[RMDB]
RNA sequence: GGGAACGACUCGAGUAGAGUCGAAAAUCUUGACACAGCGGGGCUUUGAACUCGUAACGGGAAGACAGGUGUUCGGUAGACAGUACGAUGUCAAUUAAAAGCACCUCUGUGAGUAGAAGAGGUGGAAUCUCUGGAUCUCGUUCGCGAGGUCCAGAGAAAAAGAAACAACAACAACAAC
Reactivity to DMS in 0.01 (KOAc 150mM, MgCl2 10mM, bicine 150mM(pH8.5), 24C), signal-to-noise 3, nucleotides 027 to 126: u010c010u020u010g010a140c030a050c100a040g010c080g000g000g000g010c010u010u000u000g010a080a020c030u000c030g000u010a050a090c030g020g020g000a150a030g010a040c050a060g000g020u040g000u000u020c050g000g010u030a100g000a090c030a080g000u000a040c110g010a070u020g010u000c030a060a080u000u020a070a030a060a040g000c000a010c010c010u000c000u000g000u020g010a090g000u030a090g000a130a030g000a040g000g000u000g000g000a090a040
Reactivity to 2A3 in 0.01 (KOAc 150mM, MgCl2 10mM, bicine 150mM(pH8.5), 24C), signal-to-noise 1, nucleotides 027 to 126: u000c000u000u050g010a000c000a000c030a020g000c000g020g000g010g000c000u070u040u040g010a020a040c010u000c000g000u010a030a010c020g070g000g060a010a010g060a020c120a040g000g120u030g010u000u060c030g000g090u050a030g000a080c000a020g060u040a000c010g040a060u010g030u020c040a030a000u040u050a000a000a000a000g030c000a000c000c000u000c000u000g070u070g060a050g110u180a000g020a070a000g000a010g000g020u020g030g000a070a110
The record gives the reactivity of an RNA of 177 nucleotides to DMS and 2A3. The reactions ran in a buffer of 150 mM KOAc, 10 mM MgCl2 and 150 mM bicine (pH 8.5), at 24 C. For 2A3, 1,770 sequencing reads were counted.